[RMDB]
RNA sequence: GGGAACGACUCGAGUAGAGUCGAAAAGAUAUGGAUAAACAGGGAGCUAUGGGUCGGAAACGACCCAAUAGCGAGGAUCUGUGUCCUAAGUCAAACAUCUACGUAGCCUUCGGGCUACGUAGAUGAACCGUUAAGUUUAGUUCGCUAAACUUAACGGAAAAGAAACAACAACAACAAC
Reactivity to 2A3 in 0.01 (KOAc 150mM, MgCl2 10mM, bicine 150mM(pH8.5), 24C), signal-to-noise 3, nucleotides 027 to 126: g010a000u010a010u050g000g000a010u050a150a220a010c000a000g020g000g010a000g000c000u000a010u010g010g020g000u000c000g000g000a000a010a000c000g000a000c020c020c010a000a000u010a000g000c030g020a070g000g010a000u000c000u010g010u000g000u000c000c000u000a010a010g010u000c010a080a100a050c010a020u000c000u000a000c000g000u010a000g010c010c020u060u140c300g040g000g000c000u010a000c000g010u000a000g000a000u000g000a010a030
Reactivity to DMS in 0.01 (KOAc 150mM, MgCl2 10mM, bicine 150mM(pH8.5), 24C), signal-to-noise 4, nucleotides 027 to 126: g000a010u000a020u010g000g000a020u000a050a070a070c000a010g000g000g010a010g020c010u000a010u000g000g000g010u010c010g030g010a010a000a020c000g020a010c000c000c000a000a000u000a010g020c000g000a070g010g000a010u010c000u000g010u000g000u000c000c000u010a010a130g000u000c000a140a110a260c010a010u000c000u000a000c000g000u000a000g000c000c000u000u020c240g030g010g010c000u000a000c010g000u000a000g010a000u000g000a040a090